About this RNA
Structure probing data (DMS and 2A3) for a 177-nucleotide construct. DMS adducts were read by reverse transcription with MarathonRT. For DMS, 1,167 sequencing reads were counted. Reactivities are given for positions 27 through 126. The reactions ran in a buffer of 150 mM KOAc, 10 mM MgCl2 and 150 mM bicine (pH 8.5), at 24 C.

RNA sequence: GGGAACGACUCGAGUAGAGUCGAAAAUUAAAUUUCUUACUAUUUACACAAAUCCGAUGAUUAAUGGUGAAACUCCUCCUAUGAUAGAUGAGUCAUUCAAUUCUCUUCAUAUCAAUUAUGAAUGGCACUCUCUGGAAUUGUUCGCAAUUCCAGAGAGAAAAGAAACAACAACAACAAC
Reactivity to DMS in 0.01 (KOAc 150mM, MgCl2 10mM, bicine 150mM(pH8.5), 24C), signal-to-noise 1, nucleotides 027 to 126: u000u070a070a000a130u000u010u000c010u000u010a110c020u030a030u000u050u030a050c030a120c100a100a000a010u000c040c030g020a040u040g000a020u000u000a000a120u030g000g000u000g020a130a100a040c130u000c000c030u000c000c000u010a000u000g000a150u000a000g010a010u040g000a220g000u000c090a050u000u050c090a050a150u020u000c000u010c020u000u000c040a030u100a020u050c160a000a140u000u000a010u000g050a000a000u000g030g000c160a160
Reactivity to 2A3 in 0.01 (KOAc 150mM, MgCl2 10mM, bicine 150mM(pH8.5), 24C), signal-to-noise 3, nucleotides 027 to 126: u030u010a010a020a000u060u090u020c060u110u060a070c000u040a070u090u060u070a060c090a000c020a060a190a070u090c050c060g090a110u110g040a030u040u190a130a050u090g000g010u050g030a030a020a020c030u020c010c000u000c010c000u090a080u130g050a080u030a000g060a080u070g030a020g020u050c010a100u120u000c020a040a120u100u040c090u020c000u140u090c040a130u050a070u070c080a070a040u110u060a100u210g100a060a030u000g040g010c010a000